[RMDB]
An RNA of 207 nucleotides, treated with 2A3 and DMS and read out base by base. The RNA was probed in 150 mM KOAc, 10 mM MgCl2 and 150 mM bicine (pH 8.5) at 24 C. It was measured as part of the RMDB library RSTRND. For DMS, 4,310 sequencing reads were counted. As a SHAPE reagent, 2A3 marks flexible, mostly unpaired nucleotides at the ribose 2'-OH.

RNA sequence: GGGAACGACUCGAGUAGAGUCGAAAAGCCUGAUGUGCUUAGCGGGUAUUUAUUCGGGAUAGUAAGUUGAACGUUACAAGUGUCGUACCAACUUAUGAAUCUUAAACACUUGAGAUGAGUGUGGUAGCGUUAUCAAGCAAUAUUCUGGACGCGGGUUAUGACAUGAAUACUUCGGUAUUCAUGUCAUAAAAGAAACAACAACAACAAC
Reactivity to 2A3 in 0.01 (KOAc 150mM, MgCl2 10mM, bicine 150mM(pH8.5), 24C), signal-to-noise 4, nucleotides 027 to 156: g040c000c010u040g050a060u060g030u050g000c030u050u030a040g030c030g000g010g030u070a180u040u130u030a130u080u120c060g050g000g010a030u030a040g010u010a010a020g000u010u000g020a070a010c020g020u070u100a050c090a150a170g050u050g040u220c010g000u010a080c040c020a010a000c000u010u010a020u030g030a040a100u020c020u010u090a050a080a010c040a010c000u020u050g060a040g050a160u120g010a050g040u050g000u030g060g010u060a040g010c000g020u030u050a140u160c040a070a010g030c010a020a040u050a090u190u090c040u070g000g030a020c040g000c040g040g020g000u020u000
Reactivity to DMS in 0.01 (KOAc 150mM, MgCl2 10mM, bicine 150mM(pH8.5), 24C), signal-to-noise 2, nucleotides 027 to 156: g010c010c020u000g020a090u010g010u020g000c040u000u000a110g020c080g000g040g020u000a070u000u000u010a080u010u000c030g040g010g020a060u000a210g020u000a010a030g020u000u010g010a070a050c030g020u010u010a300c090a100a180g040u010g010u000c030g040u010a170c070c000a000a050c030u000u000a060u000g040a110a100u000c050u000u000a060a100a030c030a050c020u000u010g010a160g050a100u000g020a080g020u000g010u000g010g030u000a080g000c050g030u010u000a050u020c080a050a040g030c050a040a090u000a140u000u000c020u000g010g010a030c040g020c030g000g000g000u000u000
The 2A3 profile rests on 3,076 reads. For DMS the reverse transcriptase was MarathonRT.